Annotation: The record gives the reactivity of an RNA of 177 nucleotides to 2A3 and DMS. The 2A3 profile rests on 3,952 reads. Source: RMDB library M2PK50, as collected in RNAgym. The RNA was probed in 150 mM KOAc, 10 mM MgCl2 and 150 mM bicine (pH 8.5) at 24 C.
[RMDB]
RNA sequence: GGGAACGACUCGAGUAGAGUCGAAAACCUCCAAACUUCGGUUUGGAGGAAAAGGUGCCAAAAUAAGAACGGAAAGGGAAGACGGAACCCAAGUCUAUAAAAAAAGUACCAUGUUCGCAUGGUACAAGUCAUGUUGUUAGUUCGCUAACAACAUGACAAAAGAAACAACAACAACAAC
Reactivity to 2A3 in 0.01 (KOAc 150mM, MgCl2 10mM, bicine 150mM(pH8.5), 24C), signal-to-noise 3, nucleotides 027 to 126: c000c000u000c000c000a020a010a000c020u050u090c160g070g030u000u010u020g000g010a010g010g000a030a030a000a020g010g030u090g040c020c020a030a080a030a090u180a060a030g050a070a010c030g030g040a060a050a050g030g020g000a010a020g040a010c050g030g020a050a040c020c010c000a000a020g040u020c070u070a180u240a050a090a010a010a010a000a020g010u000a000c000c000a010u010g020u030u050c240g010c080a000u000g000g000u000a010c000a010a000
Reactivity to DMS in 0.01 (KOAc 150mM, MgCl2 10mM, bicine 150mM(pH8.5), 24C), signal-to-noise 2, nucleotides 027 to 126: c000c000u000c010c000a000a020a020c000u000u000c200g050g020u020u010u000g010g010a000g010g010a020a010a090a110g020g010u000g000c040c040a090a040a100a070u000a040a090g000a080a110c090g010g000a040a050a080g010g000g010a060a020g000a060c060g000g000a060a080c030c010c060a030a100g000u000c070u000a110u010a010a010a050a120a040a120a070g010u000a000c000c000a000u000g000u000u010c190g030c000a030u000g000g020u000a000c020a030a090